[RMDB]
RNA sequence: GGGAACGACUCGAGUAGAGUCGAAAAAAGCCGGCGGUCGUCGAACAGUUCAUCGAGCGGGCAGGGUCGCAGGAUCCGCUGGCUGUUACGGUCCGCUCGGGCAAUCGUGUCGUGCUCGUCCCGAAGCAGCCUAGUCCGUCUUCGGACGGACUAGGCUAAAAGAAACAACAACAACAAC
Reactivity to 2A3 in 0.01 (KOAc 150mM, MgCl2 10mM, bicine 150mM(pH8.5), 24C), signal-to-noise 1, nucleotides 027 to 126: a000a000g020c000c000g000g040c000g030g000u130c090g000u010c000g000a110a000c000a030g090u230u130c060a100u190c150g070a000g010c000g000g030g030c000a020g100g070g100u070c040g000c000a060g120g020a170u020c040c040g170c110u060g000g030c000u000g140u000u070a000c000g000g000u000c020c000g000c000u010c120g000g020g020c000a000a000u040c000g070u110g120u210c090g070u290g000c000u000c120g050u040c000c000c000g000a050a000g040c000
An RNA of 177 nucleotides, treated with 2A3 and read out base by base. The reactions ran in a buffer of 150 mM KOAc, 10 mM MgCl2 and 150 mM bicine (pH 8.5), at 24 C. The 2A3 profile rests on 405 reads. For 2A3 the reverse transcriptase was SuperScript II with manganese. The data come from the RNA Mapping Database (RMDB), library OK1LIB.